[RMDB]
RNA sequence: GGGAACGACUCGAGUAGAGUCGAAAAAUUUUUAGUAGAGUCAGGGUUUCACUGUGUUAGCCAGGAUGGUCUCGAUCUUCUGACCUCGUGAUCCACCCGCCUCAGCCUUCCACAGUGCUGGGAUUACCUUCCAAAAGAUCUUCGGAUCUUUUGGAAGAAAAGAAACAACAACAACAAC
Reactivity to DMS in 0.01 (KOAc 150mM, MgCl2 10mM, bicine 150mM(pH8.5), 24C), signal-to-noise 1, nucleotides 027 to 126: a050u000u030u020u010u000a100g010u000a070g000a050g000u000c070a100g010g020g010u000u010u010c030a040c070u010g050u000g020u010u000a080g020c030c060a050g010g000a040u010g010g010u000c040u000c110g000a050u000c030u000u000c060u000g000a130c060c050u000c030g020u000g030a060u000c050c030a160c020c000c020g000c070c020u010c020a050g020c030c010u000u000c070c110a050c180a030g000u010g000c050u000g000g000g000a160u010u010a080c140